The data come from the RNA Mapping Database (RMDB), library OK2TST. This 177-nucleotide RNA was probed chemically with DMS and 2A3. DMS adducts were read by reverse transcription with MarathonRT. Reactivities are rounded to 0.1 and cut off at 0 and 3. Reactivities are given for positions 27 through 126. The 2A3 profile rests on 3,029 reads. The RNA was probed in 150 mM KOAc, 10 mM MgCl2 and 150 mM bicine (pH 8.5) at 24 C.

RNA sequence: GGGAACGACUCGAGUAGAGUCGAAAACUAAGAGCCUGGUGUCACUGCUGGGUGACCUGGCCUCCAACGUGACGGGCUGCGGCCCCGUCUUCGCGCAGAAGCCGUACGUGCAGAGCAUCAUCCAGGAUCGUAGUACAACGUUCGCGUUGUACUACGAAAAAGAAACAACAACAACAAC
Reactivity to DMS in 0.01 (KOAc 150mM, MgCl2 10mM, bicine 150mM(pH8.5), 24C), signal-to-noise 3, nucleotides 027 to 126: c050u010a180a120g020a120g020c090c010u000g000g010u010g000u000c060a100c040u000g020c110u000g020g020g030u000g010a030c050c060u010g020g000c100c010u010c030c040a170a120c100g000u000g000a020c020g020g000g020c080u000g010c100g020g000c090c000c010c020g000u000c030u020u010c040g020c050g020c190a120g010a040a050g020c010c000g030u010a030c140g000u000g010c030a030g010a090g020c110a080u020c070a030u010c000c010a040g000g000a160
Reactivity to 2A3 in 0.01 (KOAc 150mM, MgCl2 10mM, bicine 150mM(pH8.5), 24C), signal-to-noise 2, nucleotides 027 to 126: c030u060a110a060g020a040g150c030c010u120g040g060u090g020u040c040a000c050u100g040c060u180g210g010g010u030g030a000c000c010u010g030g010c000c020u000c010c030a050a030c020g030u040g030a000c000g010g010g030c040u070g010c040g100g000c070c010c000c000g000u010c000u090u070c030g030c000g040c010a030g030a060a010g030c020c020g030u060a070c030g060u070g020c030a030g020a020g010c020a030u050c000a010u060c040c010a010g030g040a060